Notes
Source: RMDB library TTRDEL, as collected in RNAgym. This 177-nucleotide RNA was probed chemically with DMS and 2A3. The RNA was probed in 150 mM KOAc, 10 mM MgCl2 and 150 mM bicine (pH 8.5) at 24 C. For 2A3, 10,306 sequencing reads were counted.

RNA sequence: GGGAACGACUCGAGUAGAGUCGAAAAGAUAUGGAGAAUGCUGCGAAGUCCCUAUCGGAAACGAUAGAAGGACGAUGUAUAGCACUCCUAAGUCAAAGUAUUUCAAGCGUUCGCGCUUGAAAUACAAGAUCUAAUGCAAGUUCGCUUGCAUUAGAUCAAAAGAAACAACAACAACAAC
Reactivity to DMS in 0.01 (KOAc 150mM, MgCl2 10mM, bicine 150mM(pH8.5), 24C), signal-to-noise 4, nucleotides 027 to 126: g000a020u000a280u000g000g000a010g010a070a080u000g000c000u000g010c030g000a100a300g010u010c000c000c000u010a000u000c000g010g000a100a040a150c010g010a010u000a000g000a110a100g040g000a010c010g020a040u010g010u000a040u000a010g020c000a090c000u000c010c000u000a030a100g010u000c030a090a100a160g000u000a010u000u000u000c000a010a020g010c000g020u000u020c280g010c010g010c000u000u000g000a000a000a010u000a000c010a050a070
Reactivity to 2A3 in 0.01 (KOAc 150mM, MgCl2 10mM, bicine 150mM(pH8.5), 24C), signal-to-noise 4, nucleotides 027 to 126: g020a020u070a020u090g010g000a010g010a300a230u060g000c000u000g000c060g160a150a020g010u010c000c010c000u010a010u000c010g020g010a060a010a010c010g000a000u020a010g140a270a200g000g000a000c020g000a010u080g030u020a110u110a010g000c000a010c000u000c000c000u010a110a010g020u000c070a180a070a030g000u000a010u000u010u000c000a010a010g000c000g030u100u190c300g020c000g000c170u000u010g000a000a000a000u000a000c000a010a020